The record gives the reactivity of an RNA of 177 nucleotides to 2A3. The reactions ran in a buffer of 150 mM KOAc, 10 mM MgCl2 and 150 mM bicine (pH 8.5), at 24 C.
RNA sequence: GGGAACGACUCGAGUAGAGUCGAAAAACGCAGGCUUACGAGCCUGCGAACAACGGGCUUUGUCCAAUGAAACACUUAUCGGACAUCAAGGGUUCAGAUCAGUGUUCACUGGACAAAGAUCGUUAAAGGACACUGUCUGCUUCGGCAGACAGUGUCCAAAAGAAACAACAACAACAAC
Reactivity to 2A3 in 0.01 (KOAc 150mM, MgCl2 10mM, bicine 150mM(pH8.5), 24C), signal-to-noise 1, nucleotides 027 to 126: a000c000g000c000a000g010g000c000u010u010a070c210g020a000g020c010c000u000g000c000g000a020a000c020a010a000c000g110g080g000c000u000u000u000g010u000c000c000a000a000u070g020a130a020a000c010a000c000u020u000a000u000c010g000g040a000c000a030u190c090a150a300g220g050g000u000u000c040a050g040a000u000c010a000g000u020g000u040u020c000a000c040u020g020g000a000c000a000a000a000g000a000u000c000g010u000u020a000a080a000
2A3 adducts were read by reverse transcription with SuperScript II with manganese.
For 2A3, 937 sequencing reads were counted.